[RMDB]
RNA sequence: GGGAACGACUCGAGUAGAGUCGAAAAAGUUUGUGCAAGCUUAUCAACUGAACUAUUCAGUUCAUGAUAACAAGUUCAGUAUUGAACAGGUUUCAAAUAGGUUGAAUAUUUCUGGUAUUACAAUAACGACAUAAAACGGGUUCGCCCGUUUUAUGUCAAAAGAAACAACAACAACAAC
Reactivity to DMS in 0.01 (KOAc 150mM, MgCl2 10mM, bicine 150mM(pH8.5), 24C), signal-to-noise 2, nucleotides 027 to 126: a130g000u020u000u010g060u010g010c100a080a040g050c060u010u000a040u000c050a070a120c100u000g010a020a010c060u000a080u000u000c070a040g020u000u000c060a120u020g010a060u000a000a040c060a090a050g010u000u010c010a010g000u020a120u000u000g010a020a060c020a070g030g000u000u000u010c030a040a080a070u000a050g000g010u000u000g000a040a040u010a060u000u000u000c050u010g000g000u000a060u020u000a140c090a060a060u010a090a150c230
This 177-nucleotide RNA was probed chemically with DMS. The DMS profile rests on 1,136 reads. Reactivities are given for positions 27 through 126. DMS adducts were read by reverse transcription with MarathonRT. The RNA was probed in 150 mM KOAc, 10 mM MgCl2 and 150 mM bicine (pH 8.5) at 24 C. It was measured as part of the RMDB library OK2TST.